[RMDB]
RNA sequence: GGGAACGACUCGAGUAGAGUCGAAAAGGUAGGACUUAUUAAUUCUGGAGGUCCCUCCGGGAAGGAUGACUUUGUAGAGGCAGCAAAAACUGCUGUAAUUAACAAACGAGCUGGAGGUAUGGGGCUCUGCAUAGCAUCUAUUCGUAGAUGCUAUGCAAAAAGAAACAACAACAACAAC
Reactivity to DMS in 0.01 (KOAc 150mM, MgCl2 10mM, bicine 150mM(pH8.5), 24C), signal-to-noise 3, nucleotides 027 to 126: g010g030u020a030g010g000a100c090u000u000a100u000u000a080a130u010u000c060u000g010g000a060g020g000u000c050c030c030u000c020c020g020g000g010a100a110g000g020a080u010g000a180c210u000u000u000g010u000a120g020a150g000g020c020a010g020c020a060a070a080a130a170c120u000g000c010u000g010u010a030a110u000u010a100a060c080a020a030a100c110g000a120g010c060u000g000g020a060g010g000u000a050u000g010g000g000g010c080u010c090
Reactivity to 2A3 in 0.01 (KOAc 150mM, MgCl2 10mM, bicine 150mM(pH8.5), 24C), signal-to-noise 1, nucleotides 027 to 126: g000g000u060a000g060g000a000c010u090u070a090u170u110a300a120u150u020c060u080g100g060a020g050g050u040c010c020c010u040c000c010g030g020g050a070a010g050g070a080u100g010a030c020u090u050u040g040u050a000g040a010g040g000c000a000g020c050a000a000a000a180a130c020u010g040c000u010g010u020a010a110u060u110a040a040c040a030a090a000c060g030a030g090c040u000g030g080a020g020g090u070a130u170g000g000g000g000c040u010c040